RNA sequence: GGGAACGACUCGAGUAGAGUCGAAAAGCCCUAGGCUCUGGCCGUUGCGCCCGGCGGGGUCAACUCCAUGAUUAGCAUGGAGCUGUAGGAGUCUAAAUUGGGGACGCAGAUGUUUGGGACGUCACCUUUGUUUUACGUGAUUCGUCACGUAAAACAAAAAAGAAACAACAACAACAAC
Reactivity to DMS in 0.01 (KOAc 150mM, MgCl2 10mM, bicine 150mM(pH8.5), 24C), signal-to-noise 3, nucleotides 027 to 126: g010c010c000c020u010a020g000g010c000u000c010u000g020g040c020c020g020u020u000g010c100g000c020c030c010g000g020c020g050g000g020g000u000c020a140a120c020u000c000c000a010u000g000a300u020u030a210g000c000a020u000g000g000a010g000c050u000g000u030a140g000g000a030g010u000c020u010a030a110a110u030u010g000g000g000g000a020c020g040c090a190g020a090u020g000u010u030u030g000g000g010a140c020g000u010c010a040c010c000u010
Reactivity to 2A3 in 0.01 (KOAc 150mM, MgCl2 10mM, bicine 150mM(pH8.5), 24C), signal-to-noise 4, nucleotides 027 to 126: g010c000c000c000u000a020g010g000c000u000c050u060g220g210c000c020g040u040u110g060c030g080c010c000c000g020g000c000g000g010g010g020u040c010a020a010c000u010c010c000a010u000g040a250u150u290a080g070c000a010u000g000g000a000g010c010u030g000u070a040g000g060a050g020u000c010u060a030a100a150u150u120g020g020g010g000a010c010g000c020a030g090a260u080g130u090u130u120g060g020g000a010c010g020u010c010a070c010c000u010
The record gives the reactivity of an RNA of 177 nucleotides to DMS and 2A3. The reactions ran in a buffer of 150 mM KOAc, 10 mM MgCl2 and 150 mM bicine (pH 8.5), at 24 C. Values cover nucleotides 27 to 126. The data come from the RNA Mapping Database (RMDB), libraries RFM100 and RFMREP.